[RMDB]
RNA sequence: GGGAACGACUCGAGUAGAGUCGAAAAAAAAUCUUACAAGCCCGCGGACACACUAACAGCCCCCUUGGGGAGAUGCUCCGGACAUGUCAGGCGUGGACACCCAAGGACAAAACCAAGGUCCUUGUGGCCGUGACGACAAUUUCGAUUGUCGUCACGGAAAAGAAACAACAACAACAAC
Reactivity to 2A3 in 0.01 (KOAc 150mM, MgCl2 10mM, bicine 150mM(pH8.5), 24C), signal-to-noise 1, nucleotides 027 to 126: a010a000a000a010u040c000u030u040a060c010a120a030g090c000c020c020g000c010g010g010a020c070a000c000a010c170u120a200a000c110a200g020c000c000c000c000c000u070u160g000g000g030g020a090g040a000u060g000c000u000c020c000g040g000a070c040a070u180g150u030c040a030g040g130c000g070u170g000g080a040c000a100c090c000c040a000a000g010g020a000c000a020a010a030a030c000c050a170a020g170g030u060c000c000u000u010g050u050g020g000